[RMDB]
RNA sequence: GGGAACGACUCGAGUAGAGUCGAAAAGGGGUCUCACCAGAGCUCGGCUAGAGCUUGGAUUUAUAUGGCUGAAGCCUCCACGGCCAUAUUGUCAGCUCUAGAUCGAGCUCAUGGUGAGACGGAGGCACCCAAAGGCAAAGUAUUCGUACUUUGCCAAGUAACGUUGUUACUUCGGUAACAACGUUACAAAAGAAACAACAACAACAAC
Reactivity to 2A3 in 0.01 (KOAc 150mM, MgCl2 10mM, bicine 150mM(pH8.5), 24C), signal-to-noise 2, nucleotides 027 to 156: g070g010g000g000u000c010u000c020a000c000c010a000g010a010g000c010u010c030g020g000c000u000a010g010a000g000c020u060u140g070g000a040u040u300u010a010u010a000u000g000g000c000u010g060a200a070g020c020c070u080c000c030a030c000g030g020c000c020a000u000a010u000u010g020u010c070a000g010c010u030c000u000a060g060a300u150c000g000a000g050c000u000c000a010u010g000g000u000g000a010g000a000c010g000g000a000g010g020c030a030c000c010c000a110a040a060g000g040c010a000a020a000g000u030a020u090u230c290g040u060a000c000u000u000u000g000c000c000a000a010
Source information: This 207-nucleotide RNA was probed chemically with 2A3. The RNA was probed in 150 mM KOAc, 10 mM MgCl2 and 150 mM bicine (pH 8.5) at 24 C. For 2A3, 1,432 sequencing reads were counted. 2A3 is a SHAPE reagent: it acylates the 2'-hydroxyl of flexible nucleotides of all four kinds. It was measured as part of the RMDB library RNAMAK.